[RMDB]
RNA sequence: GGGAACGACUCGAGUAGAGUCGAAAAUUAUAAGAGCAACAGUCCCUCUCCUGAAAAUUGGACUGAAUUCCAACAAGUCGGCAACUUGCAUGAAGACAAGGGUCACAGGCGGCUGGAGCCUGUCCCAGCAACUCAGGAUGAAAGGCAUGAACCAGCACGAUAUUUAAUGGUUCGCCAUUAAAUAUCGAAAAGAAACAACAACAACAAC
Reactivity to DMS in 0.01 (KOAc 150mM, MgCl2 10mM, bicine 150mM(pH8.5), 24C), signal-to-noise 1, nucleotides 027 to 156: u000u000a100u010a090a090g000a060g000c050a070a120c040a070g010u010c000c010c010u000c030u010c010c030u010g000a050a050a100a180u000u000g000g010a110c010u010g000a170a140u000u000c030c020a050a050c030a000a060g010u010c010g050g000c020a140a060c000u000u010g000c010a300u010g010a150a090g010a130c110a130a110g010g020g020u010c090a080c000a070g040g010c000g030g040c030u010g000g020a210g000c000c000u000g000u010c010c010c050a070g000c060a060a080c090u000c010a070g000g030a080u000g000a040a070a040g010g000c060a110u000g010a060a110c000c010a050g020c010a300
Reactivity to 2A3 in 0.01 (KOAc 150mM, MgCl2 10mM, bicine 150mM(pH8.5), 24C), signal-to-noise 3, nucleotides 027 to 156: u180u100a080u080a260a090g030a000g050c050a000a090c030a050g050u030c010c010c000u000c010u010c000c010u040g050a070a110a130a130u120u090g010g000a010c000u050g050a070a130u120u000c030c000a020a020c010a060a010g050u070c050g140g030c030a050a050c030u040u060g030c040a110u130g050a060a000g040a040c040a050a110g010g010g000u060c060a010c000a040g000g010c010g030g000c030u020g010g050a020g000c000c010u000g010u010c000c000c000a000g000c010a020a080c020u030c070a010g040g030a050u100g090a120a090a020g070g030c050a040u110g030a030a040c010c030a000g010c040a010
Structure probing data (DMS and 2A3) for a 207-nucleotide construct. The 2A3 profile rests on 1,872 reads. It was measured as part of the RMDB library OK3TST. DMS adducts were read by reverse transcription with MarathonRT. The reactions ran in a buffer of 150 mM KOAc, 10 mM MgCl2 and 150 mM bicine (pH 8.5), at 24 C. 2A3 is a SHAPE reagent: it acylates the 2'-hydroxyl of flexible nucleotides of all four kinds. High DMS reactivity at an A or C suggests that its Watson-Crick edge is free.